Description:
An RNA of 177 nucleotides, treated with 2A3 and DMS and read out base by base. The 2A3 profile rests on 18,996 reads. For 2A3 the reverse transcriptase was SuperScript II with manganese. The data come from the RNA Mapping Database (RMDB), library TTRDEL. For DMS the reverse transcriptase was MarathonRT. The RNA was probed in 150 mM KOAc, 10 mM MgCl2 and 150 mM bicine (pH 8.5) at 24 C.

[RMDB]
RNA sequence: GGGAACGACUCGAGUAGAGUCGAAAAGAUAUGGAGUUAGGACAUGCAACGGUUCGGAAACGAACUAGUUGCAACAGCCUACUCCUAAGUCAAAAGAUAGUUACAUGCUUCGGCAUGUAACUAUCAACACACUUAUAUGCUUCGGCAUAUAAGUGUGAAAAGAAACAACAACAACAAC
Reactivity to 2A3 in 0.01 (KOAc 150mM, MgCl2 10mM, bicine 150mM(pH8.5), 24C), signal-to-noise 5, nucleotides 027 to 126: g050a020u080a030u130g010g000a010g050u200u150a010g080g010a060c140a300u070g000c000a010a000c010g020g000u000u010c000g000g040a120a060a040c010g030a020a020c010u050a100g000u000u000g000c000a000a000c010a000g030c000c010u000a000c000u000c000c000u010a110a040g040u020c030a000a020a020a190g010a000u010a000g000u000u010a000c000a000u000g010c010u080u070c260g130g000c000a000u000g000u000a000a000c000u000a000u000c000a000a000
Reactivity to DMS in 0.01 (KOAc 150mM, MgCl2 10mM, bicine 150mM(pH8.5), 24C), signal-to-noise 5, nucleotides 027 to 126: g010a030u000a300u010g000g000a010g000u000u010a010g000g000a040c090a200u000g010c000a010a010c000g000g000u010u000c000g000g010a100a090a180c000g000a000a000c000u000a070g030u000u000g010c000a010a020c250a130g010c010c000u000a030c000u000c010c000u000a020a060g000u000c030a090a070a110a110g010a010u000a000g000u000u000a000c000a000u000g010c000u000u020c270g010g010c010a000u000g000u000a000a000c000u000a000u000c000a080a180